This 177-nucleotide RNA was probed chemically with DMS and 2A3.
For DMS the reverse transcriptase was MarathonRT.
The DMS profile rests on 9,150 reads.
For 2A3 the reverse transcriptase was SuperScript II with manganese.
It was measured as part of the RMDB library OK1LIB.
Values cover nucleotides 27 to 126.
RNA sequence: GGGAACGACUCGAGUAGAGUCGAAAACAAACCAGUCUAAAGGUGAAGAAAUGGCUAAAGCAAUGAAUGCAGUAGGUUAUGAUGCUAUGGCAGUGGGUAACCAUGAAUUUGACUUUGGAUACGAUCACAAAGCUUUAACGUUCGCGUUAAAGCUUUGAAAAGAAACAACAACAACAAC
Reactivity to DMS in 0.01 (KOAc 150mM, MgCl2 10mM, bicine 150mM(pH8.5), 24C), signal-to-noise 5, nucleotides 027 to 126: c150a060a110a080c040c020a140g010u020c040u010a050a060a060g010g030u000g010a050a060g000a070a140a050u020g000g010c040u010a070a090a130g000c020a060a070u020g010a070a110u010g010c030a070g000u010a040g000g010u000u020a090u020g010a100u010g000c010u010a040u020g000g000c180a050g020u010g000g000g000u010a060a100c060c010a020u010g000a080a100u000u000u010g010a050c060u020u010u000g000g000a040u000a050c130g020a090u050c120a120
Reactivity to 2A3 in 0.01 (KOAc 150mM, MgCl2 10mM, bicine 150mM(pH8.5), 24C), signal-to-noise 5, nucleotides 027 to 126: c070a020a050a030c020c030a020g030u020c000u070a040a050a020g050g040u100g050a010a030g050a030a090a020u070g040g010c050u110a080a030a040g050c040a040a120u190g060a080a080u130g070c020a020g050u090a060g010g100u110u080a050u290g110a090u140g010c020u050a060u060g080g000c010a020g040u120g010g080g040u040a000a040c020c010a020u080g030a120a110u120u030u040g050a070c010u020u010u010g000g000a000u020a170c050g050a090u110c030a000